The data come from the RNA Mapping Database (RMDB), library RFMREP.
Chemical mapping of a 177-nucleotide RNA with DMS.
The RNA was probed in 150 mM KOAc, 10 mM MgCl2 and 150 mM bicine (pH 8.5) at 24 C.
RNA sequence: GGGAACGACUCGAGUAGAGUCGAAAAUGUCGGCUUCCCUCAUCACACCGGAAGCUGUUACGUCACUUCCGCUGUAUCAGCUCCAGCUGUGAUGAGUGAAGGGGCAAAACAACGGCUUCGGCCGUUGGGCUUCAUAAAACUUCGGUUUUAUGAAGCCAAAAGAAACAACAACAACAAC
Reactivity to DMS in 0.01 (KOAc 150mM, MgCl2 10mM, bicine 150mM(pH8.5), 24C), signal-to-noise 2, nucleotides 027 to 126: u000g030u000c010g000g000c000u000u000c020c030c010u000c010a020u010c020a010c000a050c060c030g010g000a030a060g010c010u000g000u000u000a000c020g030u010c080a150c290u010u010c200c160g000c050u020g000u000a000u000c030a020g000c030u000c000c000a020g010c170u000g030u000g000a000u000g000a020g000u000g010a030a020g000g000g010g010c000a040a090a110a300c040a000a000c000g000g020c000u010u000c200g010g000c000c000g010u000u000g010